[RMDB]
RNA sequence: GGGAACGACUCGAGUAGAGUCGAAAAUGUGUGAACUGUCUCGGGAGGAUGCCCCUGUGCGCUGGUACAAGGAUGGGCUGGAAGUGGAGGAGAGCGAGGCCCUGGUGCUGGAGAGGGAUGGGCCACGACUUCGAUCGAAGUUCGCUUCGAUCGAAGUAAAAGAAACAACAACAACAAC
Reactivity to 2A3 in 0.01 (KOAc 150mM, MgCl2 10mM, bicine 150mM(pH8.5), 24C), signal-to-noise 1, nucleotides 027 to 126: u140g060u010g020u010g060a060a120c020u030g040u080c010u030c000g000g070g000a060g000g040a070u090g040c020c010c020c000u010g030u050g020c050g060c130u100g070g030u060a020c020a060a090g080g010a100u100g000g000g040c030u050g010g030a070a020g030u050g040g020a070g000g020a070g000a010g060c020g010a040g020g000c000c000c010u040g000g080u100g030c040u070g030g020a070g010a050g060g010g010a050u050g000g030g000c000c000a020c010g040
Reactivity to DMS in 0.01 (KOAc 150mM, MgCl2 10mM, bicine 150mM(pH8.5), 24C), signal-to-noise 2, nucleotides 027 to 126: u010g030u000g000u010g010a110a040c050u010g000u000c040u000c080g030g010g000a110g020g000a110u000g000c060c020c000c070u000g000u000g020c080g010c150u000g020g020u010a050c060a080a110g010g000a090u020g000g000g000c060u000g010g010a090a090g020u000g010g010a100g010g020a080g010a070g040c060g000a180g040g000c020c010c000u010g010g000u010g010c060u000g000g000a110g010a120g000g000g010a120u020g010g000g000c030c020a060c130g000
Annotation: Source: RMDB library OK2TRN, as collected in RNAgym. This 177-nucleotide RNA was probed chemically with 2A3 and DMS. For 2A3, 1,745 sequencing reads were counted. 2A3 adducts were read by reverse transcription with SuperScript II with manganese. Reactivities are rounded to 0.1 and cut off at 0 and 3. The reactions ran in a buffer of 150 mM KOAc, 10 mM MgCl2 and 150 mM bicine (pH 8.5), at 24 C.